Overview:
Structure probing data (DMS) for a 177-nucleotide construct. DMS adducts were read by reverse transcription with MarathonRT. Source: RMDB library OK2TRN, as collected in RNAgym. For DMS, 1,153 sequencing reads were counted. The RNA was probed in 150 mM KOAc, 10 mM MgCl2 and 150 mM bicine (pH 8.5) at 24 C.
RNA sequence: GGGAACGACUCGAGUAGAGUCGAAAAAGGUGACACACCUGCCUGGCGCGUCUUGGGCCCCUUAUUAGGCACAGUAAGGCAUAGAAAACUGUCUGAUUCCGGCCGAGUUUCCAGGCUAAGUGGGAAGUAUGUGUCUCAUCUUCGGAUGAGACACAUAAAAAGAAACAACAACAACAAC
Reactivity to DMS in 0.01 (KOAc 150mM, MgCl2 10mM, bicine 150mM(pH8.5), 24C), signal-to-noise 2, nucleotides 027 to 126: a050g010g030u000g010a230c090a140c010a130c040c040u000g010c000c010u010g000g000c300g040c190g030u000c100u000u010g030g060g020c020c010c040c050u000u030a080u000u010a040g000g010c060a020c150a050g010u020a110a100g000g000c130a020u020a060g010a060a050a120a080c090u000g010u000c010u010g000a140u010u000c040c170g020g000c030c030g000a040g010u000u000u010c020c000a080g000g000c010u010a000a050g020u010g010g000g010a110a090g010